[RMDB]
RNA sequence: GGGAACGACUCGAGUAGAGUCGAAAAUUAAAGGAGGAGGAGGAGGAGGUACGCCUCCAGCUGCUCAGCCGACGUACCGCACACACCCCUUAACGGCAAAGAGCAGCAAAAGGGAAACCAAAAAAAACUUCUAAUUGAAGUUCGCUUCAAUUAGAAGAAAAGAAACAACAACAACAAC
Reactivity to DMS in 0.01 (KOAc 150mM, MgCl2 10mM, bicine 150mM(pH8.5), 24C), signal-to-noise 1, nucleotides 027 to 126: u060u000a050a110a080g000g000a110g010g030a060g010g000a080g010g050a070g000g030a070g000g000u020a030c020g000c000c000u010c010c000a200g050c000u000g000c030u000c050a100g010c000c000g010a110c130g000u000a040c010c020g010c090a150c090a060c140a190c010c030c000c060u000u040a070a080c040g000g030c010a150a060a100g000a000g000c010a020g020c030a020a010a070a050g000g000g000a120a110a130c050c040a000a020a000a010a110a080a100a190